Structure probing data (2A3) for a 207-nucleotide construct.

[RMDB]
RNA sequence: GGGAACGACUCGAGUAGAGUCGAAAAGGUGCUAAAUCACAACCACUUCAUUCUUUCAUUGGUUGAGCGGGUGGAUACCCAACACUUACAGAUGUUGGGACGGUUCAGCGCGCGUAAGUCCGUUAGGGUAGGGUGGCUUUAUAGCAUUUAGCCACACAACUUAUACCCGCUUCGGCGGGUAUAAGUUAAAAGAAACAACAACAACAAC
Reactivity to 2A3 in 0.01 (KOAc 150mM, MgCl2 10mM, bicine 150mM(pH8.5), 24C), signal-to-noise 1, nucleotides 027 to 156: g140g000u050g030c020u020a030a060a040u150c080a020c050a130a060c130c000a030c040u150u130c010a090u140u000c000u070u120u050c000a100u010u240g000g010u040u080g010a020g060c000g000g010g130u030g000g010a040u080a080c000c000c010a000a000c000a000c010u100u190a030c050a170g150a180u030g000u000u000g010g010g080a150c120g100g000u090u050c020a080g000c170g000c010g010c010g070u060a030a040g030u030c000c000g040u050u070a010g000g000g030u040a040g000g000g090u010g000g010c000u100u020u060a180u090a090g010c010a010u060u050u050a010g000c000c000a030c020a000c000
Source: RMDB library OK3TST, as collected in RNAgym.